[RMDB]
Record summary:
Structure probing data (DMS and 2A3) for a 177-nucleotide construct. The 2A3 profile rests on 535 reads. It was measured as part of the RMDB libraries RFM100 and RFMREP. DMS adducts were read by reverse transcription with MarathonRT. The reactions ran in a buffer of 150 mM KOAc, 10 mM MgCl2 and 150 mM bicine (pH 8.5), at 24 C.

RNA sequence: GGGAACGACUCGAGUAGAGUCGAAAAAUUCUCAAACUUUAAAUCUGUAAGACCUGCAGGUUUCUUAAUUGAACUUGUGGAUGUGAAUAUCAAGUUGCUAGUGGGCCAUACGGGGUAAGCUCGUCUGUACCUGAUUCGAAUUCGUUCGAAUCAGGUAAAAAGAAACAACAACAACAAC
Reactivity to DMS in 0.01 (KOAc 150mM, MgCl2 10mM, bicine 150mM(pH8.5), 24C), signal-to-noise 2, nucleotides 027 to 126: a240u000u010c000u000c020a090a070a120c090u040u030u060a050a080a110u000c020u000g010u010a080a050g000a090c110c020u000g000c050a060g000g010u000u020u000c050u020u020a080a070u050u030g010a030a030c020u010u000g030u000g000g000a100u020g010u000g000a140a050u020a080u000c020a040a030g000u000u000g010c030u010a060g000u010g020g010g010c080c040a070u010a080c090g000g000g000g000u020a060a090g020c020u000c060g000u000c070u010g020
Reactivity to 2A3 in 0.01 (KOAc 150mM, MgCl2 10mM, bicine 150mM(pH8.5), 24C), signal-to-noise 2, nucleotides 027 to 126: a000u020u010c000u000c000a040a100a080c070u160u000u090a070a050a100u020c070u000g100u070a080a000g020a030c000c000u050g020c010a000g010g080u120u100u010c010u000u230a160a150u000u150g030a000a000c040u000u000g000u030g100g080a190u130g050u080g260a170a000u100a020u160c140a050a000g020u000u010g000c000u050a000g070u100g070g060g000c000c000a020u020a020c140g000g000g010g050u010a060a060g040c040u020c010g060u030c070u060g140